[RMDB]
RNA sequence: GGGAACGACUCGAGUAGAGUCGAAAAAUGACUUGUGGCUUCCACCCCCUGAAUACGUCCCGCUAAAAGAACUUACAAGCAAGAAGAACAGGAGGAACUUUUGUAUCAACGGAGGGGUUAAAGUGUGCAAGACGAGACGGUUCGCCGUCUCGUCUUGAAAAGAAACAACAACAACAAC
Reactivity to DMS in 0.01 (KOAc 150mM, MgCl2 10mM, bicine 150mM(pH8.5), 24C), signal-to-noise 1, nucleotides 027 to 126: a010u010g010a120c040u000u020g010u000g000g000c070u000u000c100c020a000c070c010c000c000c010u000g000a070a030u020a040c060g010u030c010c010c010g000c040u020a030a020a080a050g010a070a030c130u000u040a080c070a030a060g060c100a240a030g000a040a060g040a100a130c030a070g000g030a160g040g010a040a100c100u030u040u000u040g070u000a100u000c040a180a140c240g000g000a060g000g000g040g070u000u010a020a110a050g030u000g010u000g000
Reactivity to 2A3 in 0.01 (KOAc 150mM, MgCl2 10mM, bicine 150mM(pH8.5), 24C), signal-to-noise 1, nucleotides 027 to 126: a000u020g100a000c070u000u000g010u040g090g020c000u000u020c000c020a040c000c000c000c000c010u060g000a010a010u050a090c090g000u010c040c000c000g000c060u000a000a000a000a300g060a010a010c000u120u000a170c130a060a070g020c110a160a000g070a000a100g090a100a000c000a060g220g000a020g000g000a010a000c000u000u000u130u130g060u040a040u070c060a000a010c050g040g040a010g060g090g000g000u070u000a000a180a000g110u110g000u070g150

Record summary: Conditions: 150 mM KOAc, 10 mM MgCl2 and 150 mM bicine (pH 8.5), 24 C. An RNA of 177 nucleotides, treated with DMS and 2A3 and read out base by base. For 2A3 the reverse transcriptase was SuperScript II with manganese. For DMS the reverse transcriptase was MarathonRT. For 2A3, 444 sequencing reads were counted.